[RMDB]
RNA sequence: GGGAACGACUCGAGUAGAGUCGAAAAGAUAUGGAGGCAGUCUUUUGACGCCAUAGUGUCGGAAACGACAUGAUUGGCGAUAAGACUGCUCCUAAGUCAAAUCCACCUUUGUUCGCAAAGGUGGAAAGAGAAACCAUACGUUCGCGUAUGGUUUCUCAAAAGAAACAACAACAACAAC
Reactivity to DMS in 0.01 (KOAc 150mM, MgCl2 10mM, bicine 150mM(pH8.5), 24C), signal-to-noise 2, nucleotides 027 to 126: g000a070u000a300u000g000g000a030g020g040c000a000g020u010c010u010u000u010u000g010a180c050g020c010c000a000u000a060g000u000g010u010c000g000g000a130a130a180c000g000a000c000a000u000g000a210u010u000g000g000c000g030a100u000a010a020g000a040c000u000g000c000u000c000c000u010a060a160g000u010c010a050a140a150u000c000c000a000c000c000u020u000u000g000u010u000c210g000c000a000a020a000g000g010u000g000g010a000a000a070
Reactivity to 2A3 in 0.01 (KOAc 150mM, MgCl2 10mM, bicine 150mM(pH8.5), 24C), signal-to-noise 2, nucleotides 027 to 126: g020a040u070a050u140g020g030a030g170g290c010a020g000u000c010u000u160u150u200g270a120c100g000c000c010a000u000a020g000u000g020u010c000g010g010a070a090a030c010g020a010c010a010u020g060a170u130u040g000g010c010g010a000u020a010a010g010a000c000u000g000c000u000c000c000u000a090a020g050u000c030a010a020a230u000c000c010a010c000c000u040u030u000g040u010u090c300g000c250a010a000a000g030g000u060g000g030a010a000a000